Annotation
An RNA of 177 nucleotides, treated with DMS and 2A3 and read out base by base. Reactivities are given for positions 27 through 126. For 2A3 the reverse transcriptase was SuperScript II with manganese.

RNA sequence: GGGAACGACUCGAGUAGAGUCGAAAAUGCUUUUACACUGUUGGUGGGAGUGUAAAUUAGUUCAACCAUUGUUGAAGACAGUGUGGCGAUUCCUCAGGGAUCUAGAACCAGAAAUACCAUUUGACCCAACUGAGUGAAGGUUCGCCUUCACUCAGUUAAAAGAAACAACAACAACAAC
Reactivity to DMS in 0.01 (KOAc 150mM, MgCl2 10mM, bicine 150mM(pH8.5), 24C), signal-to-noise 3, nucleotides 027 to 126: u000g000c120u000u000u000u000a060c000a020c010u010g010u010u000g010g020u000g010g010g000a050g010u000g010u000a020a050a070u010u000a100g020u010u010c050a110a140c020c090a100u000u010g010u000u010g010a100a140g020a110c040a020g010u000g000u000g010g000c070g020a050u000u000c010c010u010c190a120g010g020g020a040u000c030u000a060g000a090a070c030c070a050g000a060a050a070u010a090c110c010a050u000u000u000g000a190c010c010c020
Reactivity to 2A3 in 0.01 (KOAc 150mM, MgCl2 10mM, bicine 150mM(pH8.5), 24C), signal-to-noise 1, nucleotides 027 to 126: u030g000c030u090u000u030u080a020c000a010c000u050g030u110u030g120g000u060g000g030g000a090g050u090g050u100a030a100a010u110u160a030g030u020u070c030a040a000c000c030a050u000u170g080u050u120g220a090a030g010a010c010a060g020u000g000u040g070g120c030g030a040u030u030c000c010u060c030a170g070g040g000a000u010c000u130a030g000a110a030c040c030a030g100a060a120a010u150a050c000c030a020u000u000u130g060a050c000c040c000